[RMDB]
This 177-nucleotide RNA was probed chemically with DMS and 2A3.
Source: RMDB library TTRDEL, as collected in RNAgym.
RNA sequence: GGGAACGACUCGAGUAGAGUCGAAAAGAUAUGGAGUAGGAACAACAGCUACCGGUCGGAAACGACCGUGUAGACAUGUUCCGCUCCUAAGUCAAAACACUAAUGCACCUUCGGGUGCAUUAGUGAACACUGGAACUUAGUUCGCUAAGUUCCAGUGAAAAGAAACAACAACAACAAC
Reactivity to DMS in 0.01 (KOAc 150mM, MgCl2 10mM, bicine 150mM(pH8.5), 24C), signal-to-noise 4, nucleotides 027 to 126: g000a030u000a210u000g010g000a010g030u000a070g030g000a010a000c000a050a180c260a140g000c010u000a010c010c010g000g010u000c000g000g000a060a100a140c000g010a010c000c000g010u010g010u010a010g010a080c140a110u000g000u000u000c010c000g000c010u000c000c000u000a020a060g010u000c020a100a070a140a210c020a000c000u010a000a010u000g010c000a000c000c010u010u010c190g030g030g010u000g000c000a000u000u000a000g010u000g000a070a140
Reactivity to 2A3 in 0.01 (KOAc 150mM, MgCl2 10mM, bicine 150mM(pH8.5), 24C), signal-to-noise 3, nucleotides 027 to 126: g000a000u030a010u070g020g000a030g050u250a300g090g020a020a000c020a050a080c070a150g050c000u000a010c000c000g010g010u010c010g010g000a080a020a030c010g000a000c000c020g010u050g000u000a010g020a010c020a040u050g000u010u000c000c000g020c000u020c000c000u010a060a010g020u020c030a000a050a110a140c010a000c000u010a000a000u000g000c010a010c000c020u040u080c300g050g000g010u000g000c010a000u000u000a000g000u000g000a000a000

For 2A3, 7,032 sequencing reads were counted.